[RMDB]
RNA sequence: GGGAACGACUCGAGUAGAGUCGAAAAAUAAAGGUCAUAUGUACGCGAGUCAAGUGCACAGACUCGAGCGUAAGCUCGGCGAAAGCCGCGUACAUGUGACCGUCGGCAAGUGUACAGUCGACAAAAACGAAGCAUUUCAAUUCGUUGAAAUGCUUCGAAAAGAAACAACAACAACAAC
Reactivity to DMS in 0.01 (KOAc 150mM, MgCl2 10mM, bicine 150mM(pH8.5), 24C), signal-to-noise 2, nucleotides 027 to 126: a090u010a100a070a140g020g020u020c000a010u000a000u000g010u000a010c000g010c000g000a030g020u010c000a030a080g000u000g000c010a010c010a190g000a000c000u000c000g010a010g010c000g000u010a110a160g030c000u000c010g010g010c000g010a120a080a160g010c000c000g020c000g010u000a000c000a000u010g000u000g010a000c000c000g020u000c010g000g000c000a030a020g020u010g000u010a010c020a300g010u000c010g000a020c010a060a010a050a070a150
Reactivity to 2A3 in 0.01 (KOAc 150mM, MgCl2 10mM, bicine 150mM(pH8.5), 24C), signal-to-noise 2, nucleotides 027 to 126: a000u300a030a150a030g020g000u000c000a000u020a000u030g000u000a000c010g010c010g000a000g000u010c040a220a170g000u000g000c000a000c010a020g000a000c000u000c010g000a000g000c010g030u060a110a120g010c000u000c010g020g000c000g070a120a040a020g010c010c000g000c000g000u000a010c000a000u010g000u000g000a000c000c010g000u000c000g010g000c010a110a300g000u000g020u010a000c020a010g000u000c000g010a000c010a010a070a010a000a000